[RMDB]
RNA sequence: GGGAACGACUCGAGUAGAGUCGAAAAGGCAAAAUAGCUUCCCUUAAAAGAAGUGAAACUAUUAAUUCCAAUCUGCAGAGCUGAUAAUGAAAGUGAAAAUGCUGUCAUGUAUAGAUACUGAGAAGUGACGUGGUAUUAUCUUCGGAUAAUACCACGUAAAAGAAACAACAACAACAAC
Reactivity to DMS in 0.01 (KOAc 150mM, MgCl2 10mM, bicine 150mM(pH8.5), 24C), signal-to-noise 4, nucleotides 027 to 126: g000g020c140a060a060a020a020u000a030g000c050u000u010c010c020c010u000u010a050a120a160a140g020a080a010g010u000g010a040a020a040c040u000a040u030u010a080a180u010u010c010c010a090a060u010c030u000g010c060a030g010a080g000c000u010g000a060u010a040a040u000g000a030a030a040g010u020g000a070a050a080a090u040g000c000u000g000u000c020a010u020g000u010a060u030a030g010a090u010a040c040u000g000a120g000a050a080g020u020g000
Reactivity to 2A3 in 0.01 (KOAc 150mM, MgCl2 10mM, bicine 150mM(pH8.5), 24C), signal-to-noise 4, nucleotides 027 to 126: g050g000c050a040a070a000a080u070a080g000c010u000u010c010c010c000u010u050a170a120a060a040g140a020a010g010u040g100a070a050a000c000u010a070u120u110a110a050u180u040c000c000a020a040u050c010u090g000c030a040g000a050g010c020u000g090a050u060a190a070u110g050a100a040a030g000u030g130a160a150a020a020u140g010c000u000g000u030c030a070u030g040u040a040u000a070g070a020u080a150c010u040g010a000g030a210a010g070u060g090
An RNA of 177 nucleotides, treated with DMS and 2A3 and read out base by base. Reactivities are given for positions 27 through 126. High DMS reactivity at an A or C suggests that its Watson-Crick edge is free. For 2A3 the reverse transcriptase was SuperScript II with manganese.